RNA sequence: GGGAACGACUCGAGUAGAGUCGAAAAGGACUUUAUGAAAGUGAGGGGUGGUGGCCUGCCCGCAUGCUGCCAUCUGUGUCGGAGGUGACGGGCGAGCUCCCCUGACGACACUAGCCAGGAAAGGGGGUACGACUAUGGGGUUCGCCCCAUAGUCGUAAAAAGAAACAACAACAACAAC
Reactivity to DMS in 0.01 (KOAc 150mM, MgCl2 10mM, bicine 150mM(pH8.5), 24C), signal-to-noise 1, nucleotides 027 to 126: g000g000a050c070u000u000u000a090u010g000a070a130a110g030u000g010a100g000g000g000g020u000g000g020u000g000g010c090c090u010g010c010c020c040g000c060a050u000g010c030u000g020c030c030a090u000c170u000g010u030g020u000c080g010g010a080g010g030u010g010a140c060g020g000g010c030g000a100g010c040u000c020c040c000c030u000g000a150c070g000a180c070a020c050u000a070g000c090c020a080g000g000a020a100a120g000g010g000g000g010
About this RNA:
An RNA of 177 nucleotides, treated with DMS and read out base by base. DMS adducts were read by reverse transcription with MarathonRT. Source: RMDB library OK2TRN, as collected in RNAgym. Reactivities are rounded to 0.1 and cut off at 0 and 3.